Record summary: An RNA of 177 nucleotides, treated with 2A3 and DMS and read out base by base. Source: RMDB library OK2TRN, as collected in RNAgym.
[RMDB]
RNA sequence: GGGAACGACUCGAGUAGAGUCGAAAACAGCAAUGUCCUUGCAGAUGGGGCGCCUCUUGAAUCUUCAUGGAGUAAGUUAAAUUCAGUAGAGAGCAUCUCAUAAUAACAAAGGCCAGCUACUUCAUGGGAGACCCAAAUAGUUCGCUAUUUGGGUCUCAAAAGAAACAACAACAACAAC
Reactivity to 2A3 in 0.01 (KOAc 150mM, MgCl2 10mM, bicine 150mM(pH8.5), 24C), signal-to-noise 1, nucleotides 027 to 126: c040a000g040c050a070a170u030g000u040c020c020u020u060g050c030a050g020a180u090g000g000g000g100c010g000c030c010u040c000u050u060g020a050a010u000c020u080u030c070a070u110g120g020a100g040u120a070a010g000u050u140a100a080a080u080u080c050a000g040u130a020g050a000g020a000g030c000a000u070c010u000c050a030u050a300a040u060a110a020c120a180a010a000g020g060c050c000a000g060c000u000a000c020u080u000c020a090u060g070g150
Reactivity to DMS in 0.01 (KOAc 150mM, MgCl2 10mM, bicine 150mM(pH8.5), 24C), signal-to-noise 1, nucleotides 027 to 126: c090a100g000c060a100a090u000g010u000c040c020u010u000g020c100a200g010a100u000g010g000g010g000c060g040c000c040u000c000u000u000g000a020a030u010c020u000u000c060a070u000g000g000a080g030u020a050a080g000u000u010a020a060a130u000u000c070a090g020u000a070g000a000g030a130g020c020a010u000c000u000c020a030u010a040a090u010a080a110c100a070a080a050g000g000c040c110a120g000c030u000a050c060u000u000c060a090u000g010g050